[RMDB]
RNA sequence: GGGAACGACUCGAGUAGAGUCGAAAAUAAAGCAACUGACAAUCGGCCAUUAUUGAAACUGCCUUCCAAAUCCGCUAAACUCUUUCUUUCAACGCACAUCUUAGGAGACAAGAUGUAAUCUCCAACACGGUCCAGUGAUGUUCGCAUCACUGGACCGAAAAGAAACAACAACAACAAC
Reactivity to 2A3 in 0.01 (KOAc 150mM, MgCl2 10mM, bicine 150mM(pH8.5), 24C), signal-to-noise 2, nucleotides 027 to 126: u300a010a050a000g070c050a030a080c000u060g030a040c000a010a090u030c050g140g040c030c120a140u090u070a050u050u280g040a030a000a040c050u080g000c000c000u060u000c000c030a010a070a210u050c040c060g060c080u150a140a030a030c030u000c000u000u100u000c000u000u100u050c010a080a060c010g060c070a000c020a000u000c030u050u060a050g000g120a070g020a010c030a070a070g000a100u020g020u000a010a010u030c040u020c030c010a100a060c120a030